RNA sequence: GGGAACGACUCGAGUAGAGUCGAAAAGCCGCUGAUAUCGCUGGAGUCGGCUCCACACACAUCAACCAUCUGACGCCUCGGGUGCUCGACAUAGACGAUCUGUACCGUCGGAUGACCGAGCGCGGCACGCUACGACGAGGUUCGCCUCGUCGUAGCGAAAAGAAACAACAACAACAAC
Reactivity to DMS in 0.01 (KOAc 150mM, MgCl2 10mM, bicine 150mM(pH8.5), 24C), signal-to-noise 1, nucleotides 027 to 126: g010c060c050g000c030u010g010a050u000a070u000c050g000c030u010g020g010a020g060u000c020g000g040c020u000c000c040a080c070a080c090a110c140a030u000c030a110a060c080c030a060u010c040u000g000a150c020g020c020c000u000c010g000g000g000u000g000c010u000c020g020a080c040a050u020a110g000a090c060g020a050u030c190u010g000u000a010c080c040g000u020c020g010g000a030u000g000a140c050c010g000a000g020c130g020c030g020g000c040a150
Reactivity to 2A3 in 0.01 (KOAc 150mM, MgCl2 10mM, bicine 150mM(pH8.5), 24C), signal-to-noise 2, nucleotides 027 to 126: g100c000c040g000c080u050g050a030u090a050u100c030g000c050u060g080g040a000g050u050c030g070g000c080u000c020c010a110c010a010c000a000c010a120u100c080a030a100c030c030a110u090c040u100g030a010c040g010c000c010u030c000g000g050g050u050g000c010u030c010g040a030c010a050u220a030g050a030c020g040a150u140c120u190g100u100a110c010c030g000u000c010g060g030a040u030g000a000c040c000g030a010g010c060g010c000g020g000c000a020